RNA sequence: GGGAACGACUCGAGUAGAGUCGAAAAGCAGUACGAUUUGGAAGGCCUUCCAAAUCGUGUAAGUUCGGGAACUUACACGUGUUGUUGGGAAACAACACGUGAUUGAAGGCCUUCAAUCACGAAUAGUUGCCCGCAACUAUUCGUACUGAGUGUGUAACGUAGGAAGCUUGUUCGCAAGCUUCCUACGAAAAGAAACAACAACAACAAC
Reactivity to 2A3 in 0.01 (KOAc 150mM, MgCl2 10mM, bicine 150mM(pH8.5), 24C), signal-to-noise 1, nucleotides 027 to 156: g100c020a010g030u120a010c070g020a080u040u100u290g110g010a010a010g000g010c030c010u000u000c050c060a080a070a180u130c020g010u000g000u010a000a000g000u010u130c150g050g060g170a010a010c000u010u010a000c020a000c020g010u020g010u020u010g010u000u030g060g070g110a000a060a000c010a000a000c000a010c000g020u040g000a010u020u050g000a010a000g010g000c000c000u010u020c000a010a000u000c020a000c010g000a020a020u010a010g010u030u000g050c040c090c050g140c010a000a000c000u020a000u000u020c000g000u010a020c040u070g040a040g120u050g000u040g030u070a130a020
The record gives the reactivity of an RNA of 207 nucleotides to 2A3. The RNA was probed in 150 mM KOAc, 10 mM MgCl2 and 150 mM bicine (pH 8.5) at 24 C. For 2A3, 1,031 sequencing reads were counted. High 2A3 reactivity points to a flexible backbone, as in loops and unpaired stretches.